[RMDB]
RNA sequence: GGGAACGACUCGAGUAGAGUCGAAAAUUUAGCUUUCCGGUUAACCACCUCAAAGCUACGCGCUAAUGAUAAUAUCUUAUCAGUUAGAUUCACUGCUAACAAAAUUGUUGGUGGUGCUCCUACAUGGUCCCACGCCGCUUCGGCGGCGUGAAAAGAAACAACAACAACAAC
Reactivity to DMS in 0.01 (KOAc 150mM, MgCl2 10mM, bicine 150mM(pH8.5), 24C), signal-to-noise 2, nucleotides 027 to 129: u080u050u100a000g000c010u000u000u000c110c160g010g030u030u020a180a030c000c110a240c010c030u050c300a010a000a020g000c010u030a000c190g010c100g030c020u010a060a080u010g010a000u020a010a090u040a160u070c210u020u010a010u020c000a070g060u020u010a020g020a130u030u050c020a050c020u030g030c000u020a040a060c050a040a110a130a080u040u040g000u000u070g010g030u000g000g000u020g000c200u010c040c000u000a060c190a050u000g010g030u010c000c070
Reactivity to 2A3 in 0.01 (KOAc 150mM, MgCl2 10mM, bicine 150mM(pH8.5), 24C), signal-to-noise 5, nucleotides 027 to 129: u030u020u010a000g010c000u010u010u040c040c020g000g000u000u020a020a030c000c000a020c050c040u060c090a000a000a000g010c000u030a070c100g130c020g000c080u050a030a040u020g060a000u020a010a080u160a110u190c130u040u020a030u060c020a090g090u060u030a000g000a030u040u030c020a000c000u010g000c030u020a010a030c010a070a170a180a300u260u140g010u000u010g000g000u000g000g010u000g010c030u020c000c000u010a070c010a150u220g010g010u040c020c000
Chemical mapping of a 170-nucleotide RNA with DMS and 2A3.
For 2A3, 5,753 sequencing reads were counted.
Conditions: 150 mM KOAc, 10 mM MgCl2 and 150 mM bicine (pH 8.5), 24 C.
For 2A3 the reverse transcriptase was SuperScript II with manganese.
It was measured as part of the RMDB library 15KLIB.
For DMS the reverse transcriptase was MarathonRT.